[RMDB]
RNA sequence: GGGAACGACUCGAGUAGAGUCGAAAAGAGUCUGGACGUCCAGUCGAUGUCGUAGGGUCACACGUUAAGGAUUGGAACUCCCGGUCCGUAGGCGUCUGCCUUGUAGGUGGAAUUGACGCUAAGGGCAAUGAAGGUGGAGUUUCGACUCCACCUUCAUAAAAGAAACAACAACAACAAC
Reactivity to DMS in 0.01 (KOAc 150mM, MgCl2 10mM, bicine 150mM(pH8.5), 24C), signal-to-noise 3, nucleotides 027 to 126: g000a120g000u010c000u010g020g030a100c070g020u000c000c030a100g010u010c090g050a100u010g000u020c030g020u000a080g030g000g010u060c060a090c130a100c080g020u010u010a090a180g010g000a090u000u000g000g000a090a080c110u000c030c000c000g030g000u000c000c000g000u060a260g000g020c000g030u000c020u000g000c000c010u000u060g020u030a040g010g000u020g020g020a090a120u020u010g010a060c010g020c010u010a030a170g000g010g010c020a120
Reactivity to 2A3 in 0.01 (KOAc 150mM, MgCl2 10mM, bicine 150mM(pH8.5), 24C), signal-to-noise 3, nucleotides 027 to 126: g030a000g100u030c010u060g030g080a020c050g050u000c020c030a030g040u080c050g070a090u110g060u060c050g040u060a090g070g030g090u120c040a030c000a000c070g020u030u110a100a080g080g000a070u010u030g100g020a060a030c010u060c050c020c000g000g000u000c000c020g000u090a140g010g000c010g000u000c020u020g000c030c020u080u110g220u300a120g020g080u080g060g060a160a260u110u140g010a010c000g000c020u020a050a060g000g010g000c030a030

Chemical mapping of a 177-nucleotide RNA with DMS and 2A3. Values cover nucleotides 27 to 126. High 2A3 reactivity points to a flexible backbone, as in loops and unpaired stretches. For DMS, 4,625 sequencing reads were counted. For 2A3 the reverse transcriptase was SuperScript II with manganese.